[RMDB]
RNA sequence: GGGAACGACUCGAGUAGAGUCGAAAAGCCUUGUGCCGCUUGCCACGAAGAUUUGGCCGCGCGCGACGCUACUUGGUAUUCGCGGCCGCGUGAUGCAGGAUGGCGAUACGCGCUGGUACAGGCGGAAACCGCAUGACUACUUCGGUAGUCAUGCGGUAAAAGAAACAACAACAACAAC
Reactivity to DMS in 0.01 (KOAc 150mM, MgCl2 10mM, bicine 150mM(pH8.5), 24C), signal-to-noise 1, nucleotides 027 to 126: g010c020c010u020u020g050u000g010c000c030g000c080u020u050g010c000c000a040c090g010a180a140g010a270u000u000u020g000g000c000c200g050c000g000c240g030c070g060a040c020g000c030u000a050c110u010u020g020g020u050a130u000u000c100g040c020g020g000c040c000g000c020g000u000g020a070u000g010c010a050g010g010a110u000g000g010c020g020a140u000a070c150g010c000g010c060u010g040g040u000a010c000a020g010g000c000g000g000a050a100
Reactivity to 2A3 in 0.01 (KOAc 150mM, MgCl2 10mM, bicine 150mM(pH8.5), 24C), signal-to-noise 1, nucleotides 027 to 126: g040c020c000u080u220g010u010g010c040c030g060c060u050u060g010c000c000a030c030g050a150a140g120a300u080u050u190g020g040c000c010g000c030g010c010g110c070g020a060c040g000c030u080a110c120u090u120g130g000u130a120u020u100c040g000c000g040g000c010c000g020c030g030u000g040a050u140g050c020a000g050g050a120u100g000g000c010g010a040u180a060c120g060c020g010c060u060g000g000u050a020c000a010g000g000c000g000g000a040a010

An RNA of 177 nucleotides, treated with DMS and 2A3 and read out base by base. The RNA was probed in 150 mM KOAc, 10 mM MgCl2 and 150 mM bicine (pH 8.5) at 24 C. The 2A3 profile rests on 967 reads.